[RMDB]
RNA sequence: GGGAACGACUCGAGUAGAGUCGAAAACAGUCGGACCUUGCACCACAGGUGGAGAACCCUUUAUCAUCAUAUUGUACUGCAUCAUCGUCACUCAGGUGAAAUUCUCCCCUCUGAGUGGGUGGAUCGCAUUAAAUGGAUGGUUCGCCAUCCAUUUAAUAAAAGAAACAACAACAACAAC
Reactivity to DMS in 0.01 (KOAc 150mM, MgCl2 10mM, bicine 150mM(pH8.5), 24C), signal-to-noise 9, nucleotides 027 to 126: c120a070g010u010c020g010g000a130c020c010u000u010g020c040a070c030c040a070c080a090g010g010u010g000g000a050g010a080a110c050c030c030u010u020u010a070u020c060a060u010c090a080u030a090u020u010g020u010a070c070u000g000c040a060u000c040a040u010c050g000u030c020a020c020u000c020a040g000g020u020g000a040a050a130u010u010c060u000c010c020c060c030u010c040u000g000a020g010u010g000g000g030u000g000g010a080u010c060g030c110
Reactivity to 2A3 in 0.01 (KOAc 150mM, MgCl2 10mM, bicine 150mM(pH8.5), 24C), signal-to-noise 9, nucleotides 027 to 126: c050a010g070u060c010g020g040a070c010c000u030u110g030c050a050c040c010a050c040a060g010g050u060g030g060a080g030a100a110c020c010c000u070u080u100a140u080c070a040u020c050a060u090a110u160u150g060u090a060c040u060g030c000a030u020c000a010u040c040g170u090c020a010c010u020c010a010g040g050u080g070a070a050a040u100u020c020u030c000c000c010c000u030c010u010g020a030g010u030g000g010g010u050g040g040a050u070c080g000c040